RNA sequence: GGGAACGACUCGAGUAGAGUCGAAAAUAUCACUAUUUCGAUAGUGAUAAAAAAACCUUUGUGAGCACGACAUGAAUGCAUGUCUAGCCCAUUGGGCUAGGACAUGUUCAACAGCGUGCUCACUCUGGUAAAAAAUAGUCCAAUUCGUUGGACUAAACGGAAUGUAUUGAUUCGUCAAUACAUUCCGAAAAGAAACAACAACAACAAC
Reactivity to 2A3 in 0.01 (KOAc 150mM, MgCl2 10mM, bicine 150mM(pH8.5), 24C), signal-to-noise 6, nucleotides 027 to 156: u070a000u000c000a000c010u000a020u040u190u110c110g050a010u000a000g000u000g000a000u060a020a090a010a000a000a000a000c010c000u000u000u000g000u000g000a010g000c010a010c010g220a230c080a220u090g100a190a050u150g050c000a010u000g000u000c000u000a000g000c010c000c110a300u120u300g010g000g000c000u020a020g010g050a020c010a000u000g000u010u030c020a110a090c000a000g030c000g000u010g000c000u000c000a000c000u000c000u000g000g040u090a120a040a000a000a010a050u070a010g000u000c000c000a000a000u110u090c260g060u110u010g000g000a000c010u030a090a070a000
Reactivity to DMS in 0.01 (KOAc 150mM, MgCl2 10mM, bicine 150mM(pH8.5), 24C), signal-to-noise 2, nucleotides 027 to 156: u000a030u000c000a030c010u000a020u000u000u010c260g010a050u000a010g030u000g000a000u010a000a010a060a070a020a060a060c000c000u010u000u000g010u000g010a020g010c000a030c000g000a090c040a160u010g000a210a230u000g020c010a000u000g010u000c000u000a020g000c000c010c030a300u000u000g050g020g060c010u010a010g060g010a020c000a020u000g000u000u000c030a060a190c020a090g010c010g010u010g020c000u000c000a000c010u020c030u010g010g030u000a000a010a080a050a100a080u000a020g000u000c000c000a030a090u000u010c240g000u010u010g020g010a040c000u000a000a040a260
An RNA of 207 nucleotides, treated with 2A3 and DMS and read out base by base.
Reactivities are given for positions 27 through 156.
It was measured as part of the RMDB library RNAMAK.
The reactions ran in a buffer of 150 mM KOAc, 10 mM MgCl2 and 150 mM bicine (pH 8.5), at 24 C.
For 2A3, 6,527 sequencing reads were counted.